Description:
Structure probing data (2A3 and DMS) for a 207-nucleotide construct. For DMS, 2,411 sequencing reads were counted.

RNA sequence: GGGAACGACUCGAGUAGAGUCGAAAAGCAACGCAAAGCCGCGGCAAGUGGAGUUAGCGAGAAGAGACUAGGCUUUGGUUUCUUCAAGUGAAGCGGUCACCAAUCAGGUGUGGUACUUACCGUAAAAAUAACCGCUCUUUGUUCGCAAAGAGCGGAACCUUGUUCUAAUGUUCGCAUUAGAACAAGGAAAAGAAACAACAACAACAAC
Reactivity to 2A3 in 0.01 (KOAc 150mM, MgCl2 10mM, bicine 150mM(pH8.5), 24C), signal-to-noise 4, nucleotides 027 to 156: g020c010a060a000c060g010c080a090a080a030g040c030c020g020c040g030g010c050a050a070g040u070g070g080a100g060u120u090a020g060c030g030a070g010a030a010g010a000g010a000c010u040a050g090g200c040u180u150u100g010g000u000u010u000c000u020u000c010a060a020g030u030g040a060a010g010c020g000g030u040c010a020c020c010a020a160u210c080a080g000g030u030g010u050g080g010u070a060c040u070u070a040c030c010g080u120a090a050a030a000a010u120a080a080c000c000g000c000u000c000u000u010u010g020u040u070c080g000c090a000a000a000g000a000g000c000g000g000a000a000
Reactivity to DMS in 0.01 (KOAc 150mM, MgCl2 10mM, bicine 150mM(pH8.5), 24C), signal-to-noise 2, nucleotides 027 to 156: g000c020a100a040c050g000c050a070a050a220g000c030c060g030c000g030g020c060a070a120g010u030g040g010a260g010u000u000a260g020c010g000a300g010a050a060g000a100g020a030c010u040a120g010g050c180u000u000u000g030g030u010u000u000c000u000u000c010a060a300g030u000g010a090a200g000c000g010g010u000c060a100c030c000a030a170u010c120a110g010g000u010g000u000g000g030u000a020c080u010u000a050c000c000g000u030a020a000a060a060a090u010a050a140c020c000g000c000u000c000u020u010u020g020u000u010c200g030c050a050a020a000g010a030g080c000g070g000a000a030